An RNA of 207 nucleotides, treated with 2A3 and read out base by base. Reactivities are rounded to 0.1 and cut off at 0 and 3. 2A3 adducts were read by reverse transcription with SuperScript II with manganese. It was measured as part of the RMDB library OK3TST.
[RMDB]
RNA sequence: GGGAACGACUCGAGUAGAGUCGAAAAUGACGUGCUGGACGCGUUCGCCAAUCUCGAAACGAAGAUCCACGACGGGCAGUUCUUCCACGUGGCCGCCAAGGAAUUUGACGAUGCAGCGGCCGGAGCGGUCAAGCGCGACGUCGGAGACCGGGCAACACUAACCACCCCUUUUCGAAGGGGUGGUUAGAAAAGAAACAACAACAACAAC
Reactivity to 2A3 in 0.01 (KOAc 150mM, MgCl2 10mM, bicine 150mM(pH8.5), 24C), signal-to-noise 1, nucleotides 027 to 156: u170g050a030c000g000u010g010c050u100g030g020a060c020g000c000g020u100u000c090g090c000c020a110a160u140c080u110c120g210a130a080a170c030g000a050a000g010a140u040c060c000a080c170g000a010c060g030g020g140c050a060g010u080u000c000u160u040c010c010a010c010g010u100g010g030c000c000g000c010c010a110a230g230g020a120a120u120u010u060g080a020c060g030a020u090g020c010a000g000c040g000g000c000c010g020g000a050g000c050g000g070u040c080a030a050g040c000g000c000g050a050c010g010u000c000g000g040a030g040a050c040c100g000g010g000c020a110a080c130a070